[RMDB]
RNA sequence: GGGAACGACUCGAGUAGAGUCGAAAAGCUUCUGUAAAGGUGGACCAAGACAACCAGCUCCAUAAGGUUGUCUUGACUUCCCAGUGCCUACUGUGGCAUGUGUCCACACACAAAUGCAUGUCAUGUACGCCAUAUCCGUAUUCGUACGGAUAUGGCGAAAAGAAACAACAACAACAAC
Reactivity to DMS in 0.01 (KOAc 150mM, MgCl2 10mM, bicine 150mM(pH8.5), 24C), signal-to-noise 3, nucleotides 027 to 126: g010c060u000u000c050u000g010u000a090a070a060g020g030u010g000g020a030c020c000a010a010g010a000c000a000a010c000c010a120g040c230u050c200c220a080u010a100a040g000g010u000u000g000u000c010u000u000g000a110c190u000u010c010c000c000a300g000u010g000c000c010u020a110c300u010g000u030g010g000c030a010u000g010u000g000u000c000c010a020c000a050c150a020c070a040a040a090u000g000c020a090u000g010u000c090a040u000g000u020a150
Reactivity to 2A3 in 0.01 (KOAc 150mM, MgCl2 10mM, bicine 150mM(pH8.5), 24C), signal-to-noise 2, nucleotides 027 to 126: g000c040u060u070c070u200g110u130a070a090a030g030g020u010g010g000a010c000c000a000a000g000a010c000a000a000c000c010a050g080c060u100c140c050a060u060a200a080g010g000u000u000g010u000c000u010u000g000a000c010u020u020c010c000c020a040g020u000g030c000c000u140a250c170u250g050u110g100g000c000a020u040g020u000g000u000c060c000a020c000a010c000a000c000a030a140a030u120g000c010a030u060g110u200c030a030u070g070u170a060